[RMDB]
RNA sequence: GGGAACGACUCGAGUAGAGUCGAAAAGAUAUGGAGUGCCAGGGAGCUGAUGGUCGGAAACGACCAUACCAGCGAAGAACUGGUCACUCCUAAGUCAAAACUACAUCAAGGUUCGCCUUGAUGUAGAGCUUAAGCUUAAGUUCGCUUAAGCUUAAGCAAAAGAAACAACAACAACAAC
Reactivity to 2A3 in 0.01 (KOAc 150mM, MgCl2 10mM, bicine 150mM(pH8.5), 24C), signal-to-noise 4, nucleotides 027 to 126: g010a000u000a000u050g000g000a000g000u000g000c010c010a010g000g000g020a010g000c000u020g010a000u010g000g010u000c000g020g010a010a000a000c000g010a010c000c020a000u010a030c160c020a000g000c010g090a300a020g000a000a000c000u000g000g040u090c020a000c010u000c000c000u000a000a000g000u000c000a000a020a070a140c000u000a000c000a010u000c000a000a010g060g020u060u110c300g150c060c000u000u000g000a000u000g000u010a000g000a040
Reactivity to DMS in 0.01 (KOAc 150mM, MgCl2 10mM, bicine 150mM(pH8.5), 24C), signal-to-noise 9, nucleotides 027 to 126: g000a000u000a010u010g010g000a020g030u000g000c010c000a010g000g010g000a010g020c000u000g020a020u000g000g000u000c000g010g010a010a010a030c000g010a020c000c000a000u000a020c300c030a010g000c000g020a100a190g000a220a270c000u000g000g000u000c050a010c000u010c000c000u000a000a030g010u010c010a060a090a060a270c010u000a000c000a010u000c000a010a000g000g000u000u020c300g020c000c000u000u000g000a010u000g000u000a000g000a060
The record gives the reactivity of an RNA of 177 nucleotides to 2A3 and DMS. DMS adducts were read by reverse transcription with MarathonRT. Conditions: 150 mM KOAc, 10 mM MgCl2 and 150 mM bicine (pH 8.5), 24 C. Values cover nucleotides 27 to 126. 2A3 adducts were read by reverse transcription with SuperScript II with manganese. For 2A3, 39,032 sequencing reads were counted.